RNA sequence: GGGAACGACUCGAGUAGAGUCGAAAAUCACACGCCAAUUUCUACCUUAAUCACUCGCACAAAGUUUGUAUGGCUUGCUGGUUAUAUAGCUGGUCGAUGGGGUAAGCCUGGCGAGUACGAAUAAUAAGCACUUGAAUCAAUGAAGGUUGACGGCGUGCUCUGCCGUCGUUUUCGAACGACGGCAGAGAAAAGAAACAACAACAACAAC
Reactivity to 2A3 in 0.01 (KOAc 150mM, MgCl2 10mM, bicine 150mM(pH8.5), 24C), signal-to-noise 2, nucleotides 027 to 156: u090c000a010c000a000c020g010c040c020a140a090u110u140u000c090u070a040c020c020u090u220a070a000u010c010a000c030u010c000g020c070a070c080a210a070a200g040u140u210u060g110u080a220u220g000g000c000u000u060g010c010u040g020g060u100u010a050u050a070u120a140g000c010u020g060g070u100c020g070a060u170g030g000g000g070u070a000a040g000c000c020u060g060g000c010g000a000g000u000a020c040g010a010a000u070a160a060u180a110a000g080c060a010c060u120u220g120a060a060u010c050a050a160u110g080a010a000g030g020u030u030g020a040c100g000g000c000g000u000g000